Chemical mapping of a 177-nucleotide RNA with DMS and 2A3.
RNA sequence: GGGAACGACUCGAGUAGAGUCGAAAAUGAUAUAAUCUGCAUCCGACAACGAUCACCAACUUCCACCUUGAUCGAUUGGUCGCAUAAUCCAUUAAAUUUGGAAGUAGUCGCUCAUGCUUAUCACUACAAUAUACGUACCAUUCGUGGUACGUAUAUUAAAAGAAACAACAACAACAAC
Reactivity to DMS in 0.01 (KOAc 150mM, MgCl2 10mM, bicine 150mM(pH8.5), 24C), signal-to-noise 9, nucleotides 027 to 126: u020g010a050u020a060u030a070a070u010c060u020g020c050a050u020c110c020g000a080c050a080a080c070g010a060u010c050a060c110c080a100a040c050u010u010c010c020a070c300c090u000u000g010a030u000c200g010a080u000u010g010g010u010c090g010c130a100u040a070a060u010c010c050a020u020u010a040a040a080u010u020u010g000g000a030a040g020u000a070g010u010c050g000c050u000c100a030u010g000c030u000u010a030u010c050a100c100u000a070c170
Reactivity to 2A3 in 0.01 (KOAc 150mM, MgCl2 10mM, bicine 150mM(pH8.5), 24C), signal-to-noise 9, nucleotides 027 to 126: u100g030a010u030a010u040a170a150u070c050u080g030c010a030u020c030c020g020a020c020a100a030c050g050a040u060c020a020c080c020a060a050c010u040u020c020c010a050c010c030u040u060g020a040u050c020g070a080u020u050g080g030u070c000g000c030a060u110a120a030u020c010c010a010u050u120a100a080a100u100u070u040g010g000a020a020g010u040a020g040u030c020g000c020u040c040a030u060g010c020u070u080a060u150c050a030c110u110a040c060
Conditions: 150 mM KOAc, 10 mM MgCl2 and 150 mM bicine (pH 8.5), 24 C. The 2A3 profile rests on 33,767 reads.